[RMDB]
RNA sequence: GGGAACGACUCGAGUAGAGUCGAAAACCAUGUUUGGUGCUGGUGAAGCAGUGGGUAGGGAAAGAAGUGGAACCAUCAGCACAGCUUUAUACGGCACCGCUGGCGAUGACCGUGGACCCGUACGAGCCCAUGGCGGCUGAUUCGUCAGCCGCCAUGGAAAAGAAACAACAACAACAAC
Reactivity to DMS in 0.01 (KOAc 150mM, MgCl2 10mM, bicine 150mM(pH8.5), 24C), signal-to-noise 1, nucleotides 027 to 126: c000c000a050u030g000u040u000u050g010g060u000g000c000u010g000g000u000g000a040a040g040c090a160g090u050g000g010g000u000a140g070g000g000a080a100a180g000a070a060g010u000g010g000a100a200c130c000a030u000c030a180g030c000a000c020a030g070c050u010u020u000a000u020a130c120g000g000c100a110c020c000g000c050u010g000g010c080g000a130u000g010a090c090c010g050u000g020g010a140c000c050c040g020u040a110c090g000a010g000c250
Reactivity to 2A3 in 0.01 (KOAc 150mM, MgCl2 10mM, bicine 150mM(pH8.5), 24C), signal-to-noise 3, nucleotides 027 to 126: c020c010a100u150g140u000u140u140g050g000u020g000c000u000g000g020u010g040a090a000g000c020a020g030u080g000g000g000u100a190g010g110g000a100a180a090g120a160a060g150u180g030g080a010a040c000c000a020u030c000a000g150c000a000c000a000g000c000u080u030u020a120u070a150c020g010g000c000a020c000c000g000c020u020g020g000c020g050a070u070g060a060c000c010g010u000g000g030a020c000c010c010g000u030a060c080g040a020g040c010
An RNA of 177 nucleotides, treated with DMS and 2A3 and read out base by base. Values cover nucleotides 27 to 126. The 2A3 profile rests on 1,568 reads. The RNA was probed in 150 mM KOAc, 10 mM MgCl2 and 150 mM bicine (pH 8.5) at 24 C.